Chemical mapping of a 177-nucleotide RNA with DMS and 2A3. For 2A3 the reverse transcriptase was SuperScript II with manganese. The data come from the RNA Mapping Database (RMDB), library OK2TRN.
[RMDB]
RNA sequence: GGGAACGACUCGAGUAGAGUCGAAAAACCUCCGGGGUGGCUGAGGAGGAAGCUACCUCUGGUCUCGUUAUGCUUUGCAUACACGGUUCACCCGUAAAUUCCUACACUAAUACACCCUAUACCGGUGGUAAUCUUGCUACUUCGGUAGCAAGAUUACAAAAGAAACAACAACAACAAC
Reactivity to DMS in 0.01 (KOAc 150mM, MgCl2 10mM, bicine 150mM(pH8.5), 24C), signal-to-noise 2, nucleotides 027 to 126: a090c050c000u000c010c030g000g000g010g020u010g010g060c050u050g010a140g010g020a070g020g010a150a080g010c030u000a010c000c000u020c020u000g000g000u000c090u020c070g030u000u000a060u000g010c010u000u000u020g030c000a000u010a060c170a060c030g020g030u010u000c070a070c080c000c080g010u000a040a100a130u000u000c030c020u010a070c130a120c160u000a040a080u000a300c030a020c000c000c060u000a110u000a170c160c140g010g010u000g020
Reactivity to 2A3 in 0.01 (KOAc 150mM, MgCl2 10mM, bicine 150mM(pH8.5), 24C), signal-to-noise 1, nucleotides 027 to 126: a000c000c000u000c020c000g000g000g000g050u000g000g030c010u020g090a070g060g030a010g030g010a080a000g040c000u020a000c030c000u000c090u080g020g040u010c050u030c050g020u000u040a030u010g000c000u100u150u220g010c030a000u000a020c050a010c070g000g040u110u060c090a050c020c000c000g010u050a090a090a090u050u030c010c030u020a050c080a040c070u050a060a040u130a150c010a020c020c040c000u060a060u130a270c100c050g010g000u040g050